[RMDB]
RNA sequence: GGGAACGACUCGAGUAGAGUCGAAAAAGGGGAUCAGCGUCCACUGGCACGGCUUCAGCAUGAACGGGGCUGAGUGGUAUGAUGGUGUGGGCUACCUUGCCCAGUGCCCCAUUCAGGCCGGCACCAACGCUGCAUAGCUAUUCGUAGCUAUGCAGCGAAAAGAAACAACAACAACAAC
Reactivity to 2A3 in 0.01 (KOAc 150mM, MgCl2 10mM, bicine 150mM(pH8.5), 24C), signal-to-noise 2, nucleotides 027 to 126: a010g010g030g000g020a030u090c050a010g050c040g050u030c040c030a110c070u070g020g000c020a030c190g010g000c050u070u040c040a060g010c040a080u140g040a060a010c000g000g010g050g040c020u020g050a030g070u100g000g040u080a070u140g190a100u150g010g050u050g000u060g030g050g000c000u040a080c000c000u040u060g020c020c000c020a010g080u150g020c010c000c000c030a000u030u040c020a000g000g010c010c000g050g010c010a000c010c000a070a010
Reactivity to DMS in 0.01 (KOAc 150mM, MgCl2 10mM, bicine 150mM(pH8.5), 24C), signal-to-noise 2, nucleotides 027 to 126: a120g000g010g010g010a120u000c060a130g020c130g050u000c020c060a120c100u000g010g050c110a100c050g010g000c050u000u000c060a070g020c110a110u020g000a070a030c050g000g000g000g000c000u000g000a080g020u020g000g020u000a060u010g000a080u020g000g010u010g040u000g020g000g010c130u010a020c110c070u000u000g000c000c010c000a110g000u010g000c000c010c010c010a070u000u000c030a050g000g010c010c030g020g010c030a110c030c090a110a140